Chemical mapping of a 177-nucleotide RNA with DMS and 2A3. The reactions ran in a buffer of 150 mM KOAc, 10 mM MgCl2 and 150 mM bicine (pH 8.5), at 24 C.
[RMDB]
RNA sequence: GGGAACGACUCGAGUAGAGUCGAAAAACCUAUGGAUUCGUCCAUAGGUGCUGGCGCGCGGCCUUUGUCCUGUCGCGUGUCCGUGGUGGGCGAUAUACGCGCAAUAGUGACAAUUCGUUGUCACUAAUCCUCACAGAGUAUUCGUACUCUGUGAGGAAAAAGAAACAACAACAACAAC
Reactivity to DMS in 0.01 (KOAc 150mM, MgCl2 10mM, bicine 150mM(pH8.5), 24C), signal-to-noise 4, nucleotides 027 to 126: a020c010c000u000a000u000g000g010a030u000u000c210g010u000c000c000a000u000a000g000g010u000g000c090u010g000g020c040g010c010g010c010g010g010c030c140u000u010u000g010u000c110c100u000g000u000c010g020c000g020u000g010u000c060c050g030u010g010g000u010g010g000g010c040g030a090u000a110u000a070c040g010c020g020c090a140a130u000a010g010u000g000a010c000a000a040u000u010c210g020u000u000g000u000c000a010c000u000a020a060
Reactivity to 2A3 in 0.01 (KOAc 150mM, MgCl2 10mM, bicine 150mM(pH8.5), 24C), signal-to-noise 2, nucleotides 027 to 126: a000c010c000u010a000u010g030g000a010u020u080c160g040u000c060c000a010u000a000g000g010u030g020c040u040g010g020c030g010c000g000c010g050g060c000c000u120u040u130g120u080c010c020u000g000u000c010g020c010g030u050g080u050c030c030g000u040g040g090u110g000g060g000c010g000a010u050a020u050a240c050g030c000g010c050a070a050u030a050g010u000g000a000c000a000a000u040u040c270g070u060u010g000u000c000a000c000u010a010a100